[RMDB]
Annotation:
The data come from the RNA Mapping Database (RMDB), library M2PK50. An RNA of 177 nucleotides, treated with DMS and 2A3 and read out base by base. Reactivities are rounded to 0.1 and cut off at 0 and 3. DMS adducts were read by reverse transcription with MarathonRT. For 2A3, 2,814 sequencing reads were counted. Conditions: 150 mM KOAc, 10 mM MgCl2 and 150 mM bicine (pH 8.5), 24 C. The DMS profile rests on 1,079 reads. 2A3 adducts were read by reverse transcription with SuperScript II with manganese.

RNA sequence: GGGAACGACUCGAGUAGAGUCGAAAACCUUCAUUGUUCGCAAUGAAGGAAAUAAAAGCCACGAUGCACCAAUAAAACGUGGCAUGGUGCAAAGAAAAAUAAAAAGCCUCUGCUUCGGCAGAGGCAACAGUAAUAAGCUGUUCGCAGCUUAUUACUGAAAAGAAACAACAACAACAAC
Reactivity to DMS in 0.01 (KOAc 150mM, MgCl2 10mM, bicine 150mM(pH8.5), 24C), signal-to-noise 2, nucleotides 027 to 126: c010c000u000u000c010a000u010u000g010u010u010c160g010c020a000a020u000g000a030a000g000g000a040a090a070u000a100a080a110a120g010c020c000a040c010g010a300u000g010c070a040c010c040a100a090u000a070a050a100a100c070g010u000g000g040c060a030u000g000g000u000g000c030a140a070a140g010a010a100a080a060a070u000a020a160a130a280a130g000c020c000u010c020u010g020c000u000u000c300g030g010c000a000g010a010g010g010c000a000a000
Reactivity to 2A3 in 0.01 (KOAc 150mM, MgCl2 10mM, bicine 150mM(pH8.5), 24C), signal-to-noise 2, nucleotides 027 to 126: c000c000u020u020c010a020u010u010g030u030u090c160g010c090a000a000u000g000a010a020g000g000a000a040a000u050a010a060a010a010g020c020c010a020c110g130a050u100g000c010a020c010c010a030a040u140a190a230a030a030c090g040u060g000g030c000a010u020g010g000u010g000c030a010a070a050g110a030a140a020a020a020u190a060a140a050a020a010g030c000c010u010c000u010g010c000u030u060c200g120g020c010a010g010a000g000g000c010a000a000